[RMDB]
RNA sequence: GGGAACGACUCGAGUAGAGUCGAAAAAUACGAUGGUUCCUACUCUAGACAAGAUAUAUGGAACAAAUAUCUUUUCAAAGACCCACUUAGCCUAUAACAAGACUCUUUACUAUGUGCCUGAUGAAUAGCAUAUUACUAUGUUCGCAUAGUAAUAUGCAAAAGAAACAACAACAACAAC
Reactivity to 2A3 in 0.01 (KOAc 150mM, MgCl2 10mM, bicine 150mM(pH8.5), 24C), signal-to-noise 8, nucleotides 027 to 126: a000u140a030c070g060a060u080g070g020u020u030c010c000u020a050c020u000c020u050a080g030a120c040a070a010g030a010u040a010u020a040u180g080g050a120a020c010a030a120a020u060a010u000c000u030u060u030u030c030a110a110a060g030a100c020c010c010a020c030u030u050a010g000c000c010u100a060u040a220a030c030a080a030g050a080c010u010c000u090u100u030a060c040u050a050u130g050u050g030c000c020u080g060a130u100g040a120a090u090a110
Reactivity to DMS in 0.01 (KOAc 150mM, MgCl2 10mM, bicine 150mM(pH8.5), 24C), signal-to-noise 7, nucleotides 027 to 126: a070u000a060c100g000a110u000g000g010u000u000c020c010u000a080c150u010c030u000a190g000a090c150a050a040g000a030u000a050u010a090u010g010g010a080a070c090a080a120a050u010a010u000c010u000u000u010u010c040a070a110a090g000a090c070c010c020a070c080u000u000a060g010c030c040u000a080u000a060a060c130a070a080g010a050c030u000c040u000u000u000a060c090u000a060u000g010u000g010c020c020u000g010a080u010g020a070a100u000a110
Overview:
An RNA of 177 nucleotides, treated with 2A3 and DMS and read out base by base. 2A3 adducts were read by reverse transcription with SuperScript II with manganese. The DMS profile rests on 7,277 reads. The 2A3 profile rests on 12,617 reads. It was measured as part of the RMDB library OK2TST. The RNA was probed in 150 mM KOAc, 10 mM MgCl2 and 150 mM bicine (pH 8.5) at 24 C. Values cover nucleotides 27 to 126. DMS adducts were read by reverse transcription with MarathonRT.